[RMDB]
RNA sequence: GGGAACGACUCGAGUAGAGUCGAAAAACUGGUGGACGAAGUCUCUGACGACUACGUGUGGUUGAGCAAACUGCUAGAUUUGGCUCCCAACUACCGUCAGCUGGAGCUGUACCAGAUUUUAGAGAGGGAGUCGCGAGGCCAGUCUCGCAACAUGGUGGCAGGUCAUGUAGUUCGCUACAUGACCUGCAAAAGAAACAACAACAACAAC
Reactivity to 2A3 in 0.01 (KOAc 150mM, MgCl2 10mM, bicine 150mM(pH8.5), 24C), signal-to-noise 1, nucleotides 027 to 156: a000c010u030g000g000u040g060g020a030c040g070a050a040g030u000c010u000c040u130g020a010c040g050a020c020u040a060c030g080u070g020u010g070g040u040u100g000a010g070c040a090a000a120c020u100g090c110u070a020g070a300u000u020u240g010g000c000u000c010c010c010a020a010c000u000a000c000c020g030u010c000a000g000c020u040g030g110a020g140c100u020g080u010a190c060c000a080g050a150u080u210u100u050a050g020a000g020a060g030g050g000a000g060u090c020g000c000g040a000g000g020c050c010a070g000u010c010u010c000g000c010a000a020c040a110u030g040g030u110g190
The record gives the reactivity of an RNA of 207 nucleotides to 2A3. For 2A3 the reverse transcriptase was SuperScript II with manganese. It was measured as part of the RMDB library OK3TST.